The record gives the reactivity of an RNA of 207 nucleotides to 2A3 and DMS.

RNA sequence: GGGAACGACUCGAGUAGAGUCGAAAAGUUCUGCGCGUAUCGCUGUGCAGUUACCUUGGCAACAUAAUGAGCCAUGUUUUGUUGGUCCCGGUCAGAGCUGGCGUUCUCAAAGCCAGGUUCGUUCUCAUAGGGGUUAGAGGACAUCAAACUUUGGAUGAGUAUGAUUUUCUUUCGAGAAAAUCAUACUAAAAGAAACAACAACAACAAC
Reactivity to 2A3 in 0.01 (KOAc 150mM, MgCl2 10mM, bicine 150mM(pH8.5), 24C), signal-to-noise 3, nucleotides 027 to 156: g070u020u050c010u010g010c030g000c010g040u120a090u200c060g010c220u110g020u030g000c010a000g010u050u090a080c020c000u050u050g020g000c040a100a010c030a230u250a190a160u260g040a020g030c020c010a020u090g010u000u100u000u020g020u000u020g060g010u030c000c050c060g030g020u030c030a010g000a030g070c000u020g020g000c020g040u180u060c060u000c080a080a100a010g000c000c000a000g000g000u030u040c020g000u040u000c030u000c030a120u130a120g050g010g010g040u030u020a010g000a000g040g010a000c000a020u050c080a060a080a180c020u140u100u160g120g000a100u150g020
Reactivity to DMS in 0.01 (KOAc 150mM, MgCl2 10mM, bicine 150mM(pH8.5), 24C), signal-to-noise 2, nucleotides 027 to 156: g000u000u000c020u000g010c000g000c020g030u010a110u000c120g040c100u000g050u000g010c040a060g010u000u000a030c030c070u010u010g040g030c030a110a140c100a120u000a080a130u000g010a240g000c000c020a100u010g000u000u000u000u000g000u000u000g010g010u000c000c010c030g030g050u000c050a180g020a080g000c040u010g010g030c060g000u000u010c040u000c070a140a100a150g000c000c010a110g030g020u000u000c080g010u000u010c020u010c020a140u000a160g020g040g010g030u000u000a170g010a090g000g020a040c010a080u000c060a050a060a100c080u010u000u010g040g010a130u010g000

For 2A3 the reverse transcriptase was SuperScript II with manganese. For 2A3, 1,230 sequencing reads were counted. Reactivities are given for positions 27 through 156.